[RMDB]
RNA sequence: GGGAACGACUCGAGUAGAGUCGAAAAUAGAACUGCCUAGUACACUAUAGGGAGAGUCACUUAGGAGACUCUGUUCCUAAGAGAAGCCUAUUCUCCUGUACUAGGCAGUAUAGGGCCAGGAAUAGGCUUUCCUAAGUGAGGUGUACUGUAAUGAUGGAGCAUAAAUCGGAUUCGUCCGAUUUAUGCUAAAAGAAACAACAACAACAAC
Reactivity to DMS in 0.01 (KOAc 150mM, MgCl2 10mM, bicine 150mM(pH8.5), 24C), signal-to-noise 2, nucleotides 027 to 156: u000a140g000a150a060c040u020g000c020c010u010a020g010u000a020c010a200c150u000a160u000a060g010g030g040a140g000a130g030u000c030a090c030u000u010a050g010g000a160g010a080c060u000c030u000g010u000u000c100c100u000a100a120g000a120g000a180a040g000c020c020u060a030u000u000c010u000c020c070u000g000u000a020c020u000a110g030g020c050a010g000u000a000u000a070g050g010g000c060c090a070g010g000a080a050u000a040g000g000c000u020u000u000c000c000u000a050a070g000u010g020a080g030g010u000g000u000a050c040u000g020u020a070a090u000g020a110u000g010g010
Reactivity to 2A3 in 0.01 (KOAc 150mM, MgCl2 10mM, bicine 150mM(pH8.5), 24C), signal-to-noise 2, nucleotides 027 to 156: u190a030g180a100a040c010u000g000c000c000u000a000g020u050a000c000a030c090u130a070u250a270g000g050g000a110g000a060g080u000c020a000c010u020u010a000g010g070a060g070a110c040u010c010u050g070u100u100c050c060u050a030a020g010a000g010a030a000g010c020c010u030a060u020u000c070u000c000c000u010g000u000a000c000u000a000g000g000c000a000g000u000a000u000a000g010g020g010c130c070a080g050g000a000a000u000a010g030g000c000u000u030u000c000c000u000a000a010g010u000g030a060g000g000u050g010u080a200c070u040g040u090a100a110u120g080a050u160g080g040